Source: RMDB library OK2TST, as collected in RNAgym. An RNA of 177 nucleotides, treated with DMS and 2A3 and read out base by base. Reactivities are rounded to 0.1 and cut off at 0 and 3. The DMS profile rests on 1,001 reads. As a SHAPE reagent, 2A3 marks flexible, mostly unpaired nucleotides at the ribose 2'-OH. The RNA was probed in 150 mM KOAc, 10 mM MgCl2 and 150 mM bicine (pH 8.5) at 24 C. DMS adducts were read by reverse transcription with MarathonRT.
RNA sequence: GGGAACGACUCGAGUAGAGUCGAAAAGGCUGCCGGCUCGGUGCUGGCCAUCGAACCGAUGCUGACCCUCGGUACCACCAAAACGGUGGUGCUCGACGACAAAUGGACGGUCACGACCGCCGAUGGGGGCGUGGCAUUCAUUCGUGAAUGCCACGCCAAAAGAAACAACAACAACAAC
Reactivity to DMS in 0.01 (KOAc 150mM, MgCl2 10mM, bicine 150mM(pH8.5), 24C), signal-to-noise 1, nucleotides 027 to 126: g050g000c000u000g020c110c020g000g000c010u000c000g040g000u000g000c060u040g010g050c120c010a000u000c000g020a010a010c000c000g000a240u000g010c000u000g000a280c020c000c030u000c060g020g000u020a000c000c000a040c000c010a110a100a060a120c250g000g020u000g000g020u000g010c010u030c030g000a070c120g010a100c180a030a030a070u000g000g000a000c000g010g000u000c010a210c300g000a030c020c000g030c030c010g010a110u000g000g000g000
Reactivity to 2A3 in 0.01 (KOAc 150mM, MgCl2 10mM, bicine 150mM(pH8.5), 24C), signal-to-noise 1, nucleotides 027 to 126: g020g000c010u020g100c100c000g000g000c000u000c000g020g020u000g010c020u090g190g080c130c000a010u030c000g000a000a000c000c030g020a000u020g030c010u060g070a100c010c000c000u000c040g020g010u010a020c000c040a010c000c030a190a060a160a170c140g000g000u020g000g000u000g000c020u030c020g070a010c100g040a030c010a050a130a110u170g020g000a100c000g010g000u060c050a020c160g130a090c030c010g020c020c020g040a130u190g030g040g030